[RMDB]
RNA sequence: GGGAACGACUCGAGUAGAGUCGAAAAUUUGGAUUGUUCUCUCAAGUUAGCAGGCAGGUCACUUUUCUCUUUUACGAAGGACUUCGAGUGCACUGGGGUCAGCAUAGAUACUUGUGUGUACGUAUAUGUUAAGCAUGGGUUUCGACCCAUGCUUAACAAAAGAAACAACAACAACAAC
Reactivity to DMS in 0.01 (KOAc 150mM, MgCl2 10mM, bicine 150mM(pH8.5), 24C), signal-to-noise 1, nucleotides 027 to 126: u010u020u010g000g000a040u000u000g000u000u000c000u090c060u010c060a030a070g000u020u000a110g000c030a030g030g110c040a060g000g060u000c100a160c030u010u000u030u020c130u000c030u000u000u000u000a070c170g030a110a060g000g000a080c160u030u000c120g000a120g020u000g000c000a040c080u000g000g000g040g030u010c000a160g000c010a040u000a160g000a030u010a060c070u000u030g000u020g010u000g040u000a020c160g000u080a070u010a060u000
Reactivity to 2A3 in 0.01 (KOAc 150mM, MgCl2 10mM, bicine 150mM(pH8.5), 24C), signal-to-noise 1, nucleotides 027 to 126: u150u150u130g180g000a140u110u130g000u000u050c070u000c050u020c050a000a150g040u060u030a090g040c010a000g000g010c020a000g000g100u090c060a140c010u050u040u000u000c020u000c000u120u230u000u070a120c050g020a060a030g000g000a000c000u050u000c010g040a050g210u000g020c050a000c090u000g000g000g120g000u000c010a100g000c050a070u050a180g040a030u070a140c040u010u010g070u000g040u050g060u080a000c000g220u150a140u070a050u140
Structure probing data (DMS and 2A3) for a 177-nucleotide construct. The 2A3 profile rests on 461 reads. Values cover nucleotides 27 to 126.